This 207-nucleotide RNA was probed chemically with DMS and 2A3.
For 2A3, 1,202 sequencing reads were counted.
DMS adducts were read by reverse transcription with MarathonRT.
In probing experiments dimethyl sulfate is read out at A N1 and C N3, which are open when not base-paired.
For 2A3 the reverse transcriptase was SuperScript II with manganese.

RNA sequence: GGGAACGACUCGAGUAGAGUCGAAAACCGAGUUACUUCGGUAACUCGGAAAAAAACCUUUGUGGGAGAGGAGCGAAGAACACCGGACUCCCAUUGGGAGUUGGUGGGAGCUCCUGUCCCACUCUGGUAAAAAGGUUGACACUUCGGUGUCAACCAACUUUUGAUAUCAGUUCGCUGAUAUCAAAAGAAAAGAAACAACAACAACAAC
Reactivity to DMS in 0.01 (KOAc 150mM, MgCl2 10mM, bicine 150mM(pH8.5), 24C), signal-to-noise 1, nucleotides 027 to 156: c010c000g000a060g000u010u010a000c000u000u000c240g070g010u000a020a000c000u000c010g000g030a000a000a070a070a160a040a030c000c000u000u000u010g040u000g010g000g000a090g010a030g000g000a050g020c010g000a090a140g030a110a110c000a030c000c030g000g000a040c010u010c000c000c010a240u020u030g000g030g000a020g060u010u000g000g040u010g000g000g010a300g020c010u000c000c000u000g020u010c000c010c010a000c010u000c000u000g010g030u010a000a080a070a140a140g040g000u010u010g000a000c000a020c000u000u000c300g080g030u010g020u000c000a010a000c000c000a020a000
Reactivity to 2A3 in 0.01 (KOAc 150mM, MgCl2 10mM, bicine 150mM(pH8.5), 24C), signal-to-noise 2, nucleotides 027 to 156: c000c000g010a000g000u000u010a000c030u040u160c210g070g020u000a000a000c000u000c000g000g000a300a000a000a000a010a000a020c000c000u010u010u010g010u000g000g000g000a020g030a000g020g000a000g020c000g040a300a070g030a040a000c030a000c000c000g020g040a030c020u030c070c040c050a240u060u150g000g000g000a020g000u000u010g030g000u000g000g000g000a000g040c000u000c010c000u020g000u010c000c000c000a040c000u000c000u000g000g000u120a110a080a000a050a000g000g000u000u000g000a000c000a020c060u050u140c300g110g000u000g000u000c000a000a000c000c000a000a000